Chemical mapping of a 177-nucleotide RNA with 2A3 and DMS.
RNA sequence: GGGAACGACUCGAGUAGAGUCGAAAAACUGCUGUGAUUAAAAACAUGCCGAUUGCAUUUGAACCCGUGUUAGUAGUAAUCCAACCAAUUAAAUACGGCGAACAGAAUCCGGCAAGGUUGGCAAAGAACUAUUUAUACCUUUCGAGGUAUAAAUAGUAAAAGAAACAACAACAACAAC
Reactivity to 2A3 in 0.01 (KOAc 150mM, MgCl2 10mM, bicine 150mM(pH8.5), 24C), signal-to-noise 3, nucleotides 027 to 126: a000c040u030g010c020u040g050u090g080a060u060u170a160a200a080a040a040c020a030u050g000c030c040g210a190u050u200g000c020a030u000u060u140g050a070a030c030c010c010g010u010g010u010u020a140g020u010a040g020u010a060a050u020c010c010a000a020c000c000a030a030u050u070a080a060a010u060a060c020g020g030c070g020a070a000c030a100g110a040a020u030c060c010g000g000c020a020a030g000g000u030u040g020g000c020a030a060a040g050a080
Reactivity to DMS in 0.01 (KOAc 150mM, MgCl2 10mM, bicine 150mM(pH8.5), 24C), signal-to-noise 5, nucleotides 027 to 126: a100c110u010g000c010u000g010u010g010a050u010u000a030a100a130a130a100c070a050u000g010c010c220g010a090u010u010g000c040a050u000u000u000g020a100a160c180c020c020g000u000g020u000u000a100g020u000a080g000u000a060a080u000c040c020a020a020c020c020a100a060u000u000a040a040a070u000a040c030g000g020c080g000a100a090c180a110g000a040a020u000c040c020g010g010c020a060a070g010g010u000u000g000g010c300a060a070a120g000a080
Source information:
For DMS the reverse transcriptase was MarathonRT. Conditions: 150 mM KOAc, 10 mM MgCl2 and 150 mM bicine (pH 8.5), 24 C. The 2A3 profile rests on 2,305 reads. The data come from the RNA Mapping Database (RMDB), library OK2TST. 2A3 adducts were read by reverse transcription with SuperScript II with manganese.